[RMDB]
RNA sequence: GGGAACGACUCGAGUAGAGUCGAAAACGGGCUGCGGUUCGGGGUCGUCGGUGUCCACGGCCAAGGUCACAUACCAGCGGCCAUCCGGCUCGCGGGACACGAUCACCAUCGUCGGAUUCAGCGUUGCAUUCAUAACACCGUUCGCGGUGUUAUGAAUAAAAGAAACAACAACAACAAC
Reactivity to DMS in 0.01 (KOAc 150mM, MgCl2 10mM, bicine 150mM(pH8.5), 24C), signal-to-noise 5, nucleotides 027 to 126: c070g030g010g000c010u000g010c170g020g000u020u010c020g020g020g000g010u000c190g000u000c020g000g020u020g010u000c000c020a190c000g000g000c010c020a090a120g020g020u000c040a060c060a110u040a110c300c180a070g000c090g010g010c010c010a060u000c170c170g000g000c010u020c010g030c110g010g000g000a050c030a040c020g000a040u000c300a100c030c020a080u020c090g000u020c010g000g000a060u000u020c030a050g000c050g000u010u000g020c150
Reactivity to 2A3 in 0.01 (KOAc 150mM, MgCl2 10mM, bicine 150mM(pH8.5), 24C), signal-to-noise 8, nucleotides 027 to 126: c020g020g080g000c030u020g020c040g040g010u050u050c020g020g000g010g040u030c020g010u020c050g110g080u040g010u000c010c010a010c010g010g000c000c010a040a060g020g000u090c020a010c020a080u250a100c020c070a030g030c020g010g000c010c000a070u070c060c060g000g000c080u130c080g040c220g030g000g000a010c000a010c010g020a030u040c020a020c020c010a080u120c030g190u040c010g030g000a040u060u040c020a010g020c010g110u120u090g020c020